Structure probing data (2A3) for a 177-nucleotide construct.
For 2A3, 572 sequencing reads were counted.
Values cover nucleotides 27 to 126.
The RNA was probed in 150 mM KOAc, 10 mM MgCl2 and 150 mM bicine (pH 8.5) at 24 C.
[RMDB]
RNA sequence: GGGAACGACUCGAGUAGAGUCGAAAAGAGUAACCAACAAUGUGAUCUUGCUUGCGGAGGCAAGACUUGCACAGUAUCAAAUCUGCAAGUAGUGCUAUUGUUGGAAAGAAUACUGUGAAGCCAACAACCCAUGGCUCCUGUUCGCAGGAGCCAUGGGAAAAGAAACAACAACAACAAC
Reactivity to 2A3 in 0.01 (KOAc 150mM, MgCl2 10mM, bicine 150mM(pH8.5), 24C), signal-to-noise 1, nucleotides 027 to 126: g030a000g040u040a030a030c000c000a000a000c000a060a000u150g200u130g300a300u080c040u000u000g010c000u000u000g000c000g040g050a000g000g000c010a030a000g070a120c000u000u050g000c000a010c000a040g000u040a080u000c000a040a150a150u000c000u000g000c000a000a000g000u000a040g190u050g050c000u000a000u000u000g000u000u000g000g000a010a010a000g000a070a000u080a000c000u000g020u010g140a130a000g040c030c030a000a000c000a090a060